[RMDB]
RNA sequence: GGGAACGACUCGAGUAGAGUCGAAAAGAUCUGCGCCGAUCGGAAACGCUAGCAAACAGCCCGCAUCAUGUCGUCUCCUAACUUCGACGUGGUGAAAUACUGAGCUUAUGCGAGUAAGCCUGUUAGCAAUAGAUCAGAACGUUCGCGUUCUGAUCAACGUAUAUUCGGGAUUCGUCCCGAAUAUACGAAAAGAAACAACAACAACAAC
Reactivity to 2A3 in 0.01 (KOAc 150mM, MgCl2 10mM, bicine 150mM(pH8.5), 24C), signal-to-noise 8, nucleotides 027 to 156: g030a050u020c020u120g030c060g050c080c040g050a090u060c030g030g030a050a090a010c060g000c050u060a020g000c030a070a040a080c040a060g060c030c010c000g030c010a010u010c000a000u010g010u020c000g030u000c040u080c090c070u120a130a160c060u060u040c010g000a010c000g010u000g010g010u030g020a030a030a000u170a030c070u040g030a020g010c010u040u010a020u090g090c030g010a040g070u010a020a010g020c000c030u060g020u050u050a010g000c040a090a120u040a200g010a000u000c010a000g000a000a000c010g010u060u070c200g030c000g100u000u000c020u000g000a000u010c000a000a000
Reactivity to DMS in 0.01 (KOAc 150mM, MgCl2 10mM, bicine 150mM(pH8.5), 24C), signal-to-noise 3, nucleotides 027 to 156: g010a080u000c020u000g020c060g020c020c030g020a090u000c100g000g000a080a040a060c070g000c020u000a040g030c020a050a060a140c150a100g010c010c010c020g020c030a050u020c030a020u000g010u000c000g010u010c090u000c100c060u000a110a050c060u010u000c000g010a040c010g040u000g010g050u000g000a050a060a150u020a050c060u010g020a130g000c020u000u000a210u000g010c210g010a140g010u000a040a110g010c040c010u010g010u000u010a110g010c060a070a130u000a120g010a030u000c010a020g010a010a010c000g060u000u000c290g020c020g030u000u000c000u000g000a010u000c000a000a060